Record summary: Conditions: 150 mM KOAc, 10 mM MgCl2 and 150 mM bicine (pH 8.5), 24 C. Structure probing data (2A3 and DMS) for a 207-nucleotide construct.
[RMDB]
RNA sequence: GGGAACGACUCGAGUAGAGUCGAAAAGAAGAGAGUCAGGAAGAGGAUCUCAGCUUCUCGACUCUCUAGUCCUAGUCUCAGCUGAAGCUGAAGAGUCGAGACUCUGACUUCCUUCGAGAUCUCGAUCGAGAGAAGGAUCCUAGAGAGCUUCCUUCAGCGUUGGCACAGUAUUCGUACUGUGCCAACGAAAAGAAACAACAACAACAAC
Reactivity to 2A3 in 0.01 (KOAc 150mM, MgCl2 10mM, bicine 150mM(pH8.5), 24C), signal-to-noise 2, nucleotides 027 to 156: g060a020a020g010a000g020a000g010u020c060a040g010g090a070a010g040a050g100g060a140u100c080u020c080a050g000c000u010u000c040u020c000g020a020c020u000c000u000c000u030a030g010u010c000c000u020a060g070u000c030u040c050a030g010c010u140g090a210a000g010c030u040g030a060a020g030a040g060u100c060g010a000g020a030c000u000c020u010g040a070c040u190u070c040c040u020u050c010g080a120g050a240u060c070u000c040g120a190u150c160g010a060g000a010g010a110a000g000g030a020u000c040c060u160a050g020a000g000a040g140c020u050u010c000c030u000u070c000a050g010
Reactivity to DMS in 0.01 (KOAc 150mM, MgCl2 10mM, bicine 150mM(pH8.5), 24C), signal-to-noise 1, nucleotides 027 to 156: g020a080a120g000a010g010a040g010u000c050a140g000g020a060a040g000a100g010g000a090u000c090u000c010a110g020c020u000u000c010u020c030g000a040c000u010c000u000c020u010a040g010u000c040c020u000a120g000u010c010u000c050a090g020c060u020g000a090a160g030c030u010g000a060a070g010a060g070u000c030g030a150g000a150c000u020c010u020g000a060c010u000u000c000c030u030u000c030g000a080g020a170u000c060u010c090g010a110u000c020g000a140g020a160g020a060a010g000g020a020u020c060c070u000a040g020a170g010a170g000c090u000u000c010c010u000u010c040a080g010